Background
The record gives the reactivity of an RNA of 177 nucleotides to DMS. It was measured as part of the RMDB library OK2TRN.
RNA sequence: GGGAACGACUCGAGUAGAGUCGAAAAACGCCGUGUCAAAGUUGUAAGGCUGGUUCAAUUCCGUCGAGGACAAUCCGUUGAACAACAAUCGACAGUCAACUAGGUGCAACAAUACCUUGCGGGCUACUAAGAUGCACCUGUUCGCAGGUGCAUCUUAAAAAGAAACAACAACAACAAC
Reactivity to DMS in 0.01 (KOAc 150mM, MgCl2 10mM, bicine 150mM(pH8.5), 24C), signal-to-noise 1, nucleotides 027 to 126: a110c130g000c030c000g020u020g020u000c040a120a040a230g030u000u000g010u000a120a170g030g020c010u000g020g010u000u000c110a050a190u020u000c020c050g020u010c140g000a170g030g100a120c300a060a020u000c030c060g050u000u020g010a150a020c080a030a010c040a080a230u000c130g000a020c010a020g000u000c110a010a050c030u000a040g000g020u000g020c090a020a090c280a070a060u010a060c020c000u010u000g020c300g000g000g000c060u000a090c270